[RMDB]
RNA sequence: GGGAACGACUCGAGUAGAGUCGAAAAACAGUCAGUAAGCUGACUGAGGGAAACGGGAGCCGGGCUUGGGACAAGAGCCAUCCCAAGUCCAAGGCCAAGUAGGCUCUAGUGAUGGUACGCCAUCACAAAAACUGGUCUACCUUCGGGUAGACCAGAACAUAAACCAUAUGUUCGCAUAUGGUUUAUGAAAAGAAACAACAACAACAAC
Reactivity to 2A3 in 0.01 (KOAc 150mM, MgCl2 10mM, bicine 150mM(pH8.5), 24C), signal-to-noise 6, nucleotides 027 to 156: a000c000a000g000u000c000a000g030u150a200a010g180c010u000g010a000c000u010g020a070g020g040g010a080a140a110c120g050g040g050a060g030c040c040g000g000g000c000u000u000g000g000g000a000c030a080a060g000a000g000c000c000a000u000c000c000c000a000a000g000u000c000c010a050a030g020g000c030c010a060a020g060u120a100g070g000c000u000c010u020a030g000u000g000a010u000g000g020u030a030c250g050c040c000a000u010c000a000c010a010a060a000a000a000c000u000g000g000u000c000u000a000c000c010u030u070c230g100g000g000u000a000g000a000c000c000a000g000a000a000
Reactivity to DMS in 0.01 (KOAc 150mM, MgCl2 10mM, bicine 150mM(pH8.5), 24C), signal-to-noise 3, nucleotides 027 to 156: a090c030a020g000u000c000a020g020u000a070a210g020c020u010g030a010c020u010g010a120g010g000g010a070a130a090c070g010g010g020a240g040c020c050g070g040g040c010u000u010g000g020g010a030c020a040a060g000a090g020c010c050a300u000c000c000c000a020a080g000u000c000c010a050a030g020g000c040c040a050a090g010u010a100g020g030c000u010c010u000a170g010u000g000a020u000g000g010u000a090c300g040c000c010a020u000c030a000c020a010a020a040a110a110c000u010g010g020u030c020u000a010c000c000u010u000c260g050g010g000u000a010g030a000c010c000a000g010a030a080
This 207-nucleotide RNA was probed chemically with 2A3 and DMS. For 2A3, 13,664 sequencing reads were counted. The RNA was probed in 150 mM KOAc, 10 mM MgCl2 and 150 mM bicine (pH 8.5) at 24 C. Values cover nucleotides 27 to 156.